This 177-nucleotide RNA was probed chemically with 2A3 and DMS. For 2A3 the reverse transcriptase was SuperScript II with manganese.

[RMDB]
RNA sequence: GGGAACGACUCGAGUAGAGUCGAAAAUACAGGUGUCCUAAGGAAAUAGUAAGCACUGUGAGCGCUCUUGUCUACAAUAAUAAAUUGUUAGCCAAGAAGGAGCUUUCAGGCCAGUGCUUUAAAAUACCAUCUUAAACGUGUUCGCACGUUUAAGAUGAAAAGAAACAACAACAACAAC
Reactivity to 2A3 in 0.01 (KOAc 150mM, MgCl2 10mM, bicine 150mM(pH8.5), 24C), signal-to-noise 2, nucleotides 027 to 126: u180a030c070a040g110g030u040g050u000c010c000u050a080a060g100g030a090a130a040u080a070g090u070a020a010g010c000a000c030u020g030u050g080a010g030c010g000c010u010c000u020u010g000u000c000u010a000c020a010a020u100a150a040u140a140a220a030u020u040g030u070u090a000g000c010c000a000a000g030a060a030g090g020a080g000c020u040u060u100c060a010g030g110c020c000a000g010u010g000c000u020u030u020a030a060a000a020u100a050c010
Reactivity to DMS in 0.01 (KOAc 150mM, MgCl2 10mM, bicine 150mM(pH8.5), 24C), signal-to-noise 3, nucleotides 027 to 126: u010a140c200a120g020g020u000g000u000c030c050u000a100a110g010g010a080a110a050u000a090g020u010a020a010g010c010a030c000u000g000u000g010a030g010c030g010c030u000c000u000u000g000u000c000u000a020c000a010a010u000a120a160u010a100a120a050u000u000g000u000u010a020g010c040c000a010a010g000a040a080g000g020a130g010c010u000u010u010c120a060g020g000c300c020a010g020u000g000c010u010u000u010a040a050a070a080u020a100c140